RNA sequence: GGGAACGACUCGAGUAGAGUCGAAAAAGUUGCCCGCGAUCGUCCAGAGUCGCGGCGAUACGCCGGUUGAUGACGCUGUUCAGACUGUCACGCGGGCGUAUCCGUUUCGGACGGUUUCCGAAGCGACGAUCCGCGAGAUCAUCUCAGAACUGGACCGAAGUUAUAUAUUUUUCGAAAUAUAUAACUUAAAAGAAACAACAACAACAAC
Reactivity to 2A3 in 0.01 (KOAc 150mM, MgCl2 10mM, bicine 150mM(pH8.5), 24C), signal-to-noise 3, nucleotides 027 to 156: a000g080u060u050g080c000c040c000g030c090g060a140u150c060g020u000c000c000a020g010a050g180u020c000g020c000g020g000c000g010a010u000a000c000g000c010c000g100g040u120u260g110a300u020g010a100c030g030c100u050g070u190u250c080a090g060a190c070u160g010u010c020a010c040g090c060g100g000g000c000g000u000a000u020c000c000g000u010u000u000c020g030g030a070c130g120g000u080u300u010c010c000g000a000a000g010c010g070a090c080g010a110u020c000c000g010c030g040a020g000a070u110c060a080u080c100u050c070a040g020a180a060c020u010g010g000a000c010c030g030
Reactivity to DMS in 0.01 (KOAc 150mM, MgCl2 10mM, bicine 150mM(pH8.5), 24C), signal-to-noise 2, nucleotides 027 to 156: a160g020u000u000g010c020c040c060g030c080g000a070u010c070g000u010c010c020a080g000a260g020u000c030g030c000g000g000c060g010a030u000a000c010g010c010c000g040g050u000u000g040a130u000g020a050c030g020c040u010g040u000u000c150a130g000a090c040u010g000u000c010a050c010g000c000g030g010g010c020g030u010a000u000c010c030g050u000u000u000c010g020g010a060c090g010g000u010u010u000c000c010g010a030a020g020c030g010a160c060g020a080u010c010c020g020c040g010a110g000a150u010c080a100u010c060u000c070a140g000a080a200c010u000g010g020a040c000c070g020